Source: RMDB library M2RFPK, as collected in RNAgym. Structure probing data (2A3) for a 207-nucleotide construct. The reactions ran in a buffer of 150 mM KOAc, 10 mM MgCl2 and 150 mM bicine (pH 8.5), at 24 C. The 2A3 profile rests on 516 reads.
RNA sequence: GGGAACGACUCGAGUAGAGUCGAAAAGAAAUUACGUUUCCUUUACACUUCUCAAACCGGGAUCAAAAGAAGCAAAGCAUCCCUCAUAUCCACGAUGGAGGGUGUCGUGGAGUAUACUGUACCAAAAAGAGCGAACACGGCUUCGGCCGUGUUCGAACCUAAUGUCCCCGUUCGCGGGGACAUUAGGAAAAGAAACAACAACAACAAC
Reactivity to 2A3 in 0.01 (KOAc 150mM, MgCl2 10mM, bicine 150mM(pH8.5), 24C), signal-to-noise 1, nucleotides 027 to 156: g000a010a060a000u250u100a070c120g000u000u000u090c010c020u000u020u060a060c040a020c020u130u120c090u010c040a140a110a060c020c060g060g000g000a000u100c070a030a140a070a030g150a120a040g050c080a090a010a010g020c000a020u000c000c080c000u030c000a040u090a030u040c000c000a000c040g000a000u050g140g060a050g100g030g020u060g030u040c000g000u010g000g050a000g020u020a030u000a020c100u080g050u130a090c080c000a140a050a000a000a000g100a060g150c020g000a000a000c000a000c000g000g000c000u000u080c130g050g010c020c000g030u000g000u030u000c000g010a000a000